[RMDB]
RNA sequence: GGGAACGACUCGAGUAGAGUCGAAAAGCGGUGAAGCACAGGUAUGAGGCUGAGAAGUCUCAGCAGAGGUCAUCGUCGAAUUAAUACUGGUUUAAGAAUACCUGUGAACUUAGACUAGUAGAUGAUAGUUAGAGUUAGUAUUCGUACUAGCUCUAACAAAAGAAACAACAACAACAAC
Reactivity to 2A3 in 0.01 (KOAc 150mM, MgCl2 10mM, bicine 150mM(pH8.5), 24C), signal-to-noise 9, nucleotides 027 to 126: g010c000g000g000u010g010a020a010g060c000a000c000a000g000g000u020a010u020g000a000g000g000c000u000g000a010g020a080a010g020u000c000u000c000a000g000c020a010g030a050g030g070u010c010a000u000c000g050u020c030g070a050a050u070u060a090a050u030a040c000u000g000g000u010u010u000a000a000g000a010a000u010a030c000c000u000g000u000g000a010a010c000u000u000a000g000a000c000u000a000g000u000a010g020a080u110g020a040u070a120
Reactivity to DMS in 0.01 (KOAc 150mM, MgCl2 10mM, bicine 150mM(pH8.5), 24C), signal-to-noise 9, nucleotides 027 to 126: g000c000g010g020u000g000a020a060g020c010a020c010a000g010g000u000a060u000g000a010g010g000c000u000g000a220g000a160a010g010u000c000u000c000a020g000c260a140g000a150g010g000u000c000a000u000c010g010u010c050g000a100a060u020u010a050a060u000a010c000u000g000g000u000u000u000a000a010g010a060a140u010a030c000c000u000g010u000g000a030a300c000u000u000a000g000a000c010u000a010g010u000a030g000a080u030g000a080u010a140